[RMDB]
RNA sequence: GGGAACGACUCGAGUAGAGUCGAAAAACGGCGUAUACGUACGCCGAUUACUAUUUGCGCAAGUUUUUACUUGUAUAGUUAUGCUUUAGCUCGUGACAAUUCCAGUAUGAAUGACACUGCAACAAAACACGGGAUAUAAUUUCGAUUAUAUCCCGUGAAAAGAAACAACAACAACAAC
Reactivity to DMS in 0.01 (KOAc 150mM, MgCl2 10mM, bicine 150mM(pH8.5), 24C), signal-to-noise 6, nucleotides 027 to 126: a110c010g010g010c000g020u000a010u010a120c230g030u000a000c000g010c000c000g010a030u000u000a070c020u010a040u000u010u020g030c210g020c010a020a030g010u000u020u030u010u020a020c010u000u000g010u010a040u010a020g010u000u000a250u010g000c030u000u000u010a080g010c030u000c030g010u000g010a060c090a090a150u010u000c020c010a060g000u010a070u010g010a080a050u010g000a060c100a050c070u010g000c070a050a050c130a060a080a080a140
Reactivity to 2A3 in 0.01 (KOAc 150mM, MgCl2 10mM, bicine 150mM(pH8.5), 24C), signal-to-noise 9, nucleotides 027 to 126: a000c000g000g000c000g010u010a010u010a050c240g050u010a010c000g000c000c000g000a000u010u010a010c000u010a020u040u130u270g140c070g000c010a010a020g000u020u050u070u170u230a090c010u010u010g010u030a040u040a020g020u030u040a060u160g020c030u050u050u060a110g040c010u010c020g020u020g020a060c040a060a080u010u020c010c010a040g070u080a090u190g120a180a080u110g030a020c010a010c070u070g010c040a100a060c010a050a140a030a010